[RMDB]
RNA sequence: GGGAACGACUCGAGUAGAGUCGAAAACACUAGACAUGGAGCAAUACUCUACACAUAAGGCUGAUGACAGGAGAAGCUGCUCUUACCUUUCUAUGUUUGCUCUAAAUGCACAGGCCUUACAAGCGAAAGUCCCUUACACAGGAGGCCUGCGUAUUUCGACGAAAAGGCGAUUCGUCGCCUUUUCGUCAAAAGAAACAACAACAACAAC
Reactivity to 2A3 in 0.01 (KOAc 150mM, MgCl2 10mM, bicine 150mM(pH8.5), 24C), signal-to-noise 2, nucleotides 027 to 156: c130a040c030u140a040g010a060c090a160u090g000g020a000g100c010a000a060u100a250c020u060c120u300a020c030a000c000a090u150a020a000g030g030c040u060g000a040u010g070a140c000a000g000g070a080g090a140a020g110c000u000g030c040u000c000u010u140a120c000c000u020u140u000c080u080a050u050g030u000u030u080g020c010u000c000u030a040a040a010u060g000c010a040c000a000g000g000c000c010u000u190a100c080a090a050g030c040g200a000a000a000g010u020c010c000c010u080u150a160c200a010c040a020g060g060a010g000g050c000c000u000g000c000g000u000a050u040u170u100c060